[RMDB]
RNA sequence: GGGAACGACUCGAGUAGAGUCGAAAAAAUCUUUUUACUCAUAAUUGAAGAGGCAAUUAAUGGUAUUGAAUUGACAGUACCAGUAACAUCCCUUAAGGCAUAUAAUUUUUUGUCUGCAGGAGUUAAAAUCUUAUGUGUUAUUCGUAACACAUAAGAUAAAAGAAACAACAACAACAAC
Reactivity to 2A3 in 0.01 (KOAc 150mM, MgCl2 10mM, bicine 150mM(pH8.5), 24C), signal-to-noise 2, nucleotides 027 to 126: a010a030u080c050u080u070u050u060u060a070c010u070c040a100u050a300a130u170u080g020a110a020g050a070g100g000c020a030a050u100u070a180a040u090g020g000u000a010u000u050g040a170a080u150u190g050a060c000a010g000u010a000c000c010a000g020u000a000a010c010a140u040c000c020c000u010u040a010a010g030g010c030a000u030a030u030a210a300u200u240u100u040u020u030g010u000c000u010g000c040a010g000g050a020g040u050u120a030a080a010
Reactivity to DMS in 0.01 (KOAc 150mM, MgCl2 10mM, bicine 150mM(pH8.5), 24C), signal-to-noise 4, nucleotides 027 to 126: a100a080u030c020u020u010u000u000u000a080c050u000c030a100u010a090a110u000u020g000a090a090g000a050g000g010c170a040a080u000u000a050a070u000g000g000u000a000u000u000g010a140a100u010u010g010a170c020a020g020u010a020c000c000a040g000u000a020a020c130a090u000c120c010c010u000u000a150a040g010g020c000a010u000a080u010a060a030u010u010u000u010u010u000g010u000c020u000g010c300a110g030g000a020g010u010u000a040a080a080